Chemical mapping of a 207-nucleotide RNA with 2A3 and DMS. DMS adducts were read by reverse transcription with MarathonRT. For DMS, 3,258 sequencing reads were counted.
RNA sequence: GGGAACGACUCGAGUAGAGUCGAAAACGUGUAUUCGUACACGACUUUGGGGUCGGAUGGAAAGCUCGAAGAACAUGAACUACCUCUGAAGCCUCCACGGAGGCAUGGGAGAGCUUUACAUCCGACGGAGGCACCCUGGUUUACGUUUCGACGUAAACAUCAUGCGAUAGUUCGCUAUCGCAUGAUGAAAAGAAACAACAACAACAAC
Reactivity to 2A3 in 0.01 (KOAc 150mM, MgCl2 10mM, bicine 150mM(pH8.5), 24C), signal-to-noise 3, nucleotides 027 to 156: c020g010u010g000u020a040u060u150c220g020u050a020c020a000c020g170a160c060u090u130u220g000g000g010g010u070c050g000g030a000u000g030g030a000a000a000g000c000u030c010g120a230a010g000a000a000c000a000u010g020a020a040c020u090a070c300c000u000c000u030g020a060a030g000c000c000u000c010c010a020c020g010g010a000g000g000c000a000u000g000g000g010a030g000a000g000c000u000u000u010a010c010a010u000c010c010g000a010c000g000g000a000g000g000c000a010c000c000c010u020g040g030u000u040u020a020c030g000u020u070u300c210g070a040c020g020u060a050a010a020
Reactivity to DMS in 0.01 (KOAc 150mM, MgCl2 10mM, bicine 150mM(pH8.5), 24C), signal-to-noise 2, nucleotides 027 to 156: c000g020u000g060u000a040u000u000c240g040u000a030c010a040c020g050a080c010u000u000u000g000g010g000g000u000c020g030g020a050u010g010g000a050a040a010g010c000u000c000g010a160a190g000a140a300c060a080u000g000a120a130c040u000a300c000c000u000c000u000g000a020a180g020c000c000u010c000c000a300c070g010g030a010g010g010c010a000u010g010g000g020a100g010a030g000c010u000u000u000a010c010a030u000c010c020g020a010c050g010g020a020g070g030c020a150c030c000c020u000g100g000u020u000u000a050c030g020u000u000u000c100g000a080c010g020u000a040a050a120